[RMDB]
RNA sequence: GGGAACGACUCGAGUAGAGUCGAAAACACAUGCCAUCAUAUCGGUUAAGAACUCUUAACUCUGAUGGCUUUCGAGUUAUGUGGUGGAUUGAAGCUCUCCCUUCAAUUCAACGUACCGUUCCGUCAAAUUCUCCAAAUGCUUCGGCAUUUGGAGAAUAAAAGAAACAACAACAACAAC
Reactivity to 2A3 in 0.01 (KOAc 150mM, MgCl2 10mM, bicine 150mM(pH8.5), 24C), signal-to-noise 2, nucleotides 027 to 126: c070a010c010a070u160g010c020c010a000u040c020a020u070a080u290c060g050g000u000u010a040a000g060a300a260c050u040c000u300u000a020a010c000u000c010u070g000a010u000g030g020c000u010u010u000c010g010a000g000u100u030a100u160g070u080g070g110u010g010g010a010u000u000g000a000a000g000c060u040c060u120c140c000c000u000u000c000a000a010u000u000c000a010a020c020g000u030a020c010c060g000u000u000c010c000g030u030c040a090a040
Reactivity to DMS in 0.01 (KOAc 150mM, MgCl2 10mM, bicine 150mM(pH8.5), 24C), signal-to-noise 4, nucleotides 027 to 126: c120a100c190a110u010g010c000c000a000u000c000a030u010a070u010c280g020g000u000u000a000a000g010a180a180c300u000c010u000u000a000a000c000u000c110u000g000a010u000g000g000c020u010u000u000c010g010a070g020u010u010a030u010g000u010g020g020u000g010g000a000u010u000g000a020a010g010c140u000c140u010c180c250c000u000u000c010a000a010u010u010c000a030a030c010g010u010a010c060c020g020u000u000c010c000g000u010c080a050a060
The record gives the reactivity of an RNA of 177 nucleotides to 2A3 and DMS.
Reactivities are given for positions 27 through 126.
Source: RMDB library M2PK90, as collected in RNAgym.
For DMS, 2,999 sequencing reads were counted.
The RNA was probed in 150 mM KOAc, 10 mM MgCl2 and 150 mM bicine (pH 8.5) at 24 C.